[RMDB]
Structure probing data (2A3 and DMS) for a 207-nucleotide construct. Values cover nucleotides 27 to 156. Conditions: 150 mM KOAc, 10 mM MgCl2 and 150 mM bicine (pH 8.5), 24 C.

RNA sequence: GGGAACGACUCGAGUAGAGUCGAAAACGGUUGGAGCGCCGAUUUUCCAGAAGCUCACAACUGACAUUGCGGCAACAUGGAGCCUGACGUGGGUUUUUACGCUGGCAGAAGAGCGCGCGUUCAUCCAGUGGUUGCGUAGCCCGAGUUACCUCAACAACAUGCGGAAAUUAUUCGUAAUUUCCGCAUGAAAAGAAACAACAACAACAAC
Reactivity to 2A3 in 0.01 (KOAc 150mM, MgCl2 10mM, bicine 150mM(pH8.5), 24C), signal-to-noise 3, nucleotides 027 to 156: c000g020g020u030u080g060g000a000g030c000g000c040c020g020a100u060u000u040u050c000c010a030g030a070a040g020c000u030c020a150c020a020a090c040u070g030a020c050a170u100u190g060c050g030g010c040a060a020c040a110u050g060g020a040g030c010c030u030g030a040c060g010u040g040g100g020u050u020u010u060u100a040c040g010c050u030g070g000c080a010g100a130a010g020a040g010c040g000c000g020c040g030u030u070c040a040u040c030c020a120g120u080g110g060u130u030g050c010g050u070a050g010c000c010c010g030a020g000u040u070a070c030c010u030c050a080a100c020a040a010
Reactivity to DMS in 0.01 (KOAc 150mM, MgCl2 10mM, bicine 150mM(pH8.5), 24C), signal-to-noise 1, nucleotides 027 to 156: c030g040g010u010u010g010g020a040g030c030g020c000c000g020a130u000u030u010u000c080c040a230g050a120a130g020c000u010c010a150c080a060a110c010u020g010a130c080a150u000u020g000c060g050g010c030a080a050c070a090u000g020g010a110g010c010c030u010g020a050c090g040u020g010g010g020u000u000u000u000u010a110c100g020c000u020g010g070c080a090g020a120a060g000a010g010c010g020c010g040c050g020u000u000c040a140u000c010c010a100g000u000g040g020u010u000g010c010g030u000a120g000c040c000c030g030a100g040u020u030a040c050c000u000c070a070a090c120a110a230